[RMDB]
RNA sequence: GGGAACGACUCGAGUAGAGUCGAAAAGCCCUGGGCUUGUGCUUGGGGAGUGAAUGAUGGGUUCUGACCCCCAUGCACCCCUGUGGGCCCCUGGCAUCACUGGCCCCAUCCUUCACCCCUGCCAACCAUUCCACAGUGUAUUCGUACACUGUGGAAUAAAAGAAACAACAACAACAAC
Reactivity to DMS in 0.01 (KOAc 150mM, MgCl2 10mM, bicine 150mM(pH8.5), 24C), signal-to-noise 3, nucleotides 027 to 126: g000c000c000c020u030g010g000g000c270u010u010g010u020g020c020u000u000g020g000g000g000a060g020u000g010a050a030u000g000a070u010g000g010g020u000u000c050u020g010a160c120c020c020c030c000a040u020g010c060a070c030c260c020c050u000g030u010g010g010g010c050c040c050c040u000g000g020c030a050u010c080a080c090u010g000g010c170c030c000c020a040u000c020c050u000u000c030a060c030c020c010c020u000g020c030c020a060a060c120c030
Reactivity to 2A3 in 0.01 (KOAc 150mM, MgCl2 10mM, bicine 150mM(pH8.5), 24C), signal-to-noise 6, nucleotides 027 to 126: g020c000c000c010u030g050g010g010c100u080u150g030u120g020c010u040u080g010g000g010g020a190g050u060g040a040a030u070g120a090u100g050g100g020u080u040c020u060g130a100c010c000c000c000c010a010u040g010c000a050c000c000c010c020u070g040u180g030g020g010c000c000c000c020u020g030g000c010a040u050c010a040c060u040g030g000c000c000c000c000a020u030c000c010u010u060c020a060c010c000c000c000u010g010c010c000a020a010c010c000